[RMDB]
RNA sequence: GGGAACGACUCGAGUAGAGUCGAAAACUCUGGAAUGUAUGCUUUGGAGAUGGGUUUAAAGACUUGGACUCUGUCUUCGAUCCCGAAGCAACCCUGCAGCUUGAUUACAGGCCCUCUUAGCCUCAAAUCCGCAUUGGUGCUGUAGGACGCAAGACCAGUACGAGGUGGUAUUCGUACCACCUCGUACAAAAGAAACAACAACAACAAC
Reactivity to 2A3 in 0.01 (KOAc 150mM, MgCl2 10mM, bicine 150mM(pH8.5), 24C), signal-to-noise 1, nucleotides 027 to 156: c030u000c070u020g000g110a150a060u030g060u160a120u150g000c020u050u050u050g060g000a200g000a050u090g040g110g000u190u200u200a090a150a030g010a000c040u120u130g010g040a080c020u040c090u210g030u040c030u190u020c060g020a030u000c000c010c000g000a010a050g050c000a010a140c010c010c030u000g000c000a000g000c010u070u120g010a020u000u090a040c050a040g000g010c000c050c000u100c010u100u230a000g020c000c000u000c030a050a040a080u110c030c010g080c190a170u030u300g100g000u150g000c000u000g010u000a020g000g010a010c020g010c000a030a090g010a170c050c010a010
This 207-nucleotide RNA was probed chemically with 2A3. Reactivities are given for positions 27 through 156. For 2A3, 511 sequencing reads were counted. Conditions: 150 mM KOAc, 10 mM MgCl2 and 150 mM bicine (pH 8.5), 24 C. Source: RMDB library OK3TST, as collected in RNAgym.